[RMDB]
RNA sequence: GGGAACGACUCGAGUAGAGUCGAAAAUCAAUGUACCUGAGUUAAUCAGGAAUGUAUUGGUAUGUUCUCAAGAAUUGCGACAUGCAGUCAAAUUUCAUAUGGAACGUCCACCACAAGCAAUUAGAGGCGAGACCGGCUGUUUCGACAGCCGGUCUCGAAAAGAAACAACAACAACAAC
Reactivity to 2A3 in 0.01 (KOAc 150mM, MgCl2 10mM, bicine 150mM(pH8.5), 24C), signal-to-noise 1, nucleotides 027 to 126: u000c020a040a000u000g050u200a130c000c000u140g020a020g050u250u300a180a140u020c000a000g000g000a000a000u180g000u000a000u000u000g000g000u000a000u000g070u070u000c000u060c000a000a000g300a020a050u060u180g160c210g000a180c080a110u230g000c000a000g000u050c020a000a000a300u050u040u000c050a000u000a180u070g070g090a040a020c000g140u020c000c070a020c000c020a000c060a000a170g000c070a070a020u130u130a190g020a000g140g150